The record gives the reactivity of an RNA of 170 nucleotides to DMS and 2A3. Values cover nucleotides 27 to 129. The reactions ran in a buffer of 150 mM KOAc, 10 mM MgCl2 and 150 mM bicine (pH 8.5), at 24 C. For DMS, 7,301 sequencing reads were counted. 2A3 is a SHAPE reagent: it acylates the 2'-hydroxyl of flexible nucleotides of all four kinds. 2A3 adducts were read by reverse transcription with SuperScript II with manganese. It was measured as part of the RMDB library 15KLIB.
RNA sequence: GGGAACGACUCGAGUAGAGUCGAAAAUUAAUAGUUUCGUCUCGCUGUAUAAUGUCACACGCGAUAAGUUGGAAAAACUUAUCUCUACUGCUCGUGAUGGCGUAAGGCGAGGCGAUAACUUCCAUAGCAGGUCUGUGCUUCGGCACAGACAAAAGAAACAACAACAACAAC
Reactivity to DMS in 0.01 (KOAc 150mM, MgCl2 10mM, bicine 150mM(pH8.5), 24C), signal-to-noise 2, nucleotides 027 to 129: u070u030a000a000u020a050g020u050u010u000c020g020u000c020u000c010g040c010u010g110u050a070u030a110a040u010g050u010c010a030c000a040c010g020c130g010a030u030a040a000g000u000u000g000g000a040a090a130a020a000c010u010u030a040u010c000u010c300u010a200c170u030g030c040u010c010g030u070g020a130u020g000g000c060g030u050a070a190g100g010c000g010a030g000g000c000g030a000u010a010a010c020u010u090c050c040a080u050a070g030c120a000g020
Reactivity to 2A3 in 0.01 (KOAc 150mM, MgCl2 10mM, bicine 150mM(pH8.5), 24C), signal-to-noise 4, nucleotides 027 to 129: u070u030a030a100u110a050g010u000u030u000c010g000u000c010u000c010g010c020u000g110u080a150u050a150a140u070g010u000c000a000c000a000c010g010c000g000a000u000a000a000g000u000u030g190g080a140a080a000a070a020c000u000u000a000u000c000u000c040u070a150c020u040g100c010u010c040g010u030g040a250u000g000g000c000g020u040a080a060g020g000c000g010a000g000g000c000g000a010u000a000a000c000u020u000c020c000a070u100a030g030c020a000g000